[RMDB]
The data come from the RNA Mapping Database (RMDB), library RNAMAK. The record gives the reactivity of an RNA of 207 nucleotides to 2A3. Conditions: 150 mM KOAc, 10 mM MgCl2 and 150 mM bicine (pH 8.5), 24 C. The 2A3 profile rests on 864 reads.

RNA sequence: GGGAACGACUCGAGUAGAGUCGAAAAUCCUAAGUCGCUCUAACCAGGCUAUAGACAGCAGUAACAGAGUCGGAAACGACGACGAAGUUACUGCCGAAGCCUGAUGAAAGAGCGAUAUGGAAAAAUCCAUAAGCCCAGUUCGCUGGGCUUAUGGAAACUUGGUGAUAAUCUUCGGAUUAUCACCAAGAAAAGAAACAACAACAACAAC
Reactivity to 2A3 in 0.01 (KOAc 150mM, MgCl2 10mM, bicine 150mM(pH8.5), 24C), signal-to-noise 1, nucleotides 027 to 156: u000c000c000u000a080a010g030u000c020g020c000u000c000u010a100a110c010c000a000g000g000c020u050a030u120a280g060a030c070a020g000c000a000g000u000a000a000c000a000g050a010g030u010c000g000g060a250a300a150c150g300a070c000g010a000c000g000a070a000g000u000u000a000c000u000g000c010c000g000a000a000g000c020c040u000g000a010u080g070a080a240a000g000a000g010c000g010a000u010a050u030g040g110a020a070a050a000a000u000c000c000a030u000a000a000g010c000c000c020a000g000u040u050c150g040c100u000g000g000g130c000u000u000a000u000g000g000a000a000a020